[RMDB]
RNA sequence: GGGAACGACUCGAGUAGAGUCGAAAAAAAAAGGAACUUCCCGGCAAAUCCUCCUGUCAGGUGCUUGCGCUCAAAUUUGCCAGAUGCGUAUUCGCGAAAAAGUUCCAUUAAUGAGAGGAGGAAAAAACAUUAUAGUAACCUUCGGGUUACUAUAAUGAAAAGAAACAACAACAACAAC
Reactivity to DMS in 0.01 (KOAc 150mM, MgCl2 10mM, bicine 150mM(pH8.5), 24C), signal-to-noise 2, nucleotides 027 to 126: a050a010a100a080a080g000g010a030a020c070u000u000c020c010c000g020g010c130a040a050a060u000c000c000u010c010c010u010g000u000c010a070g000g000u000g010c050u010u000g000c050g000c000u010c030a050a080a140u000u010u000g020c080c100a080g000a070u010g010c020g010u010a050u000u000c140g020c010g000a030a050a040a060a060g010u000u000c010c000a160u000u000a070a060u000g020a030g010a020g000g010a020g000g010a000a030a050a070a030a070